[RMDB]
RNA sequence: GGGAACGACUCGAGUAGAGUCGAAAAGAUAUGGAGUCUAGAUGGACAUGAGCCUGUUUCGGAAACGAAACAGCUCAACAGCCAUGUGGACUCCUAAGUCAAAGUAAGCUGGUUCGCCAGCUUACAAGACUCAGAGCAAGUUCGCUUGCUCUGAGUCAAAAGAAACAACAACAACAAC
Reactivity to DMS in 0.01 (KOAc 150mM, MgCl2 10mM, bicine 150mM(pH8.5), 24C), signal-to-noise 1, nucleotides 027 to 126: g000a100u000a300u010g010g000a070g000u000c000u000a050g020a000u020g010g000a050c170a240u010g000a000g000c190c050u000g000u000u000u000c010g050g000a140a050a160c010g010a000a000a000c000a040g000c000u000c000a020a040c300a200g080c010c000a000u000g000u000g000g020a000c000u000c000c000u000a010a070g000u010c020a130a130a230g010u000a000a010g000c000u000g000g000u010u020c290g000c000c020a000g010c000u000u010a000c000a120a120
Reactivity to 2A3 in 0.01 (KOAc 150mM, MgCl2 10mM, bicine 150mM(pH8.5), 24C), signal-to-noise 1, nucleotides 027 to 126: g050a020u040a070u120g000g000a020g000u000c000u030a050g030a300u020g050g020a040c130a250u120g000a030g030c050c230u020g010u000u000u000c050g020g030a020a030a060c000g000a010a000a000c000a000g030c000u010c000a010a010c080a040g170c010c000a140u200g120u070g190g000a010c000u060c000c000u000a040a000g000u000c030a090a000a000g010u000a000a020g000c000u010g070g000u050u090c220g000c120c010a010g000c000u000u000a000c000a000a020

The record gives the reactivity of an RNA of 177 nucleotides to DMS and 2A3. For 2A3, 2,052 sequencing reads were counted. Source: RMDB library TTRDES, as collected in RNAgym.